RNA sequence: GGGAACGACUCGAGUAGAGUCGAAAAGGCAUGAUCUCAGCUCACCACAACCUCCUCUUCCCAGGUUCAAGCAAUUCUCCUGCCUCAGCCUUCCAAGUAGCUGGGACUACAGGCAUGCACCACUACGCCUGGCUAAUUUUUGUAUUUUUUAAGUAGAAUCGUAUCCUGGAUUCGUCCAGGAUACGAUAAAAGAAACAACAACAACAAC
Reactivity to 2A3 in 0.01 (KOAc 150mM, MgCl2 10mM, bicine 150mM(pH8.5), 24C), signal-to-noise 1, nucleotides 027 to 156: g030g010c010a050u110g030a200u070c010u040c050a010g050c020u000c090a040c010c050a080c020a130a070c010c000u030c040c020u000c070u050u000c020c000c000a010g000g010u010u100c000a020a010g050c030a110a090u110u000c050u080c110c090u020g100c030c000u120c010a010g000c030c000u050u090c060c000a100a160g000u000a050g120c000u000g000g000g020a000c000u070a050c050a000g000g000c010a000u040g020c010a070c050c000a050c050u090a010c050g010c000c000u000g030g030c000u100a130a060u020u000u000u070u130g040u020a110u020u020u000u000u100u000a150a130g020u030a040g190a150
Conditions: 150 mM KOAc, 10 mM MgCl2 and 150 mM bicine (pH 8.5), 24 C. The record gives the reactivity of an RNA of 207 nucleotides to 2A3. The 2A3 profile rests on 525 reads. The data come from the RNA Mapping Database (RMDB), library OK3TST.